[RMDB]
RNA sequence: GGGAACGACUCGAGUAGAGUCGAAAAGAUAUGGAUCGAAGUGGGACAUGAAAUAGGAUCGGAAACGAUCCUCAUUUCAACAGCCCACCGAUCCUAAGUCAAAAGCUGGUGCGUUCGCGCACCAGCACUACCACUUUAACUUCGGUUAAAGUGGUAGAAAAGAAACAACAACAACAAC
Reactivity to 2A3 in 0.01 (KOAc 150mM, MgCl2 10mM, bicine 150mM(pH8.5), 24C), signal-to-noise 5, nucleotides 027 to 126: g000a000u000a010u040g000g010a000u010c020g040a300a100g050u010g000g020g020a070c240a300u300g030a170a000a000u010a010g000g000a000u000c000g000g000a010a010a000c010g000a000u010c000c010u000c000a000u000u010u000c020a060a060c080a030g010c000c000c010a000c000c000g010a000u000c000c000u000a000a000g010u010c010a010a050a040a190g000c000u000g000g000u020g020c010g030u080u220c300g010c000g000c170a000c000c000a000g000c000a000
Reactivity to DMS in 0.01 (KOAc 150mM, MgCl2 10mM, bicine 150mM(pH8.5), 24C), signal-to-noise 4, nucleotides 027 to 126: g010a030u000a040u000g000g010a010u000c000g010a210a180g020u000g000g000g020a040c070a300u030g010a000a000a010u000a010g010g000a000u000c010g020g010a000a010a020c000g000a010u000c000c000u000c220a000u000u010u000c010a140a090c130a230g000c000c000c000a000c000c000g010a020u000c000c000u000a000a050g000u010c000a150a090a110a080g040c000u000g000g040u000g030c000g010u000u010c300g000c020g010c000a010c000c000a000g020c020a050
Chemical mapping of a 177-nucleotide RNA with 2A3 and DMS. For 2A3, 15,043 sequencing reads were counted. The DMS profile rests on 5,433 reads. Source: RMDB library TTRDES, as collected in RNAgym. For DMS the reverse transcriptase was MarathonRT. The RNA was probed in 150 mM KOAc, 10 mM MgCl2 and 150 mM bicine (pH 8.5) at 24 C.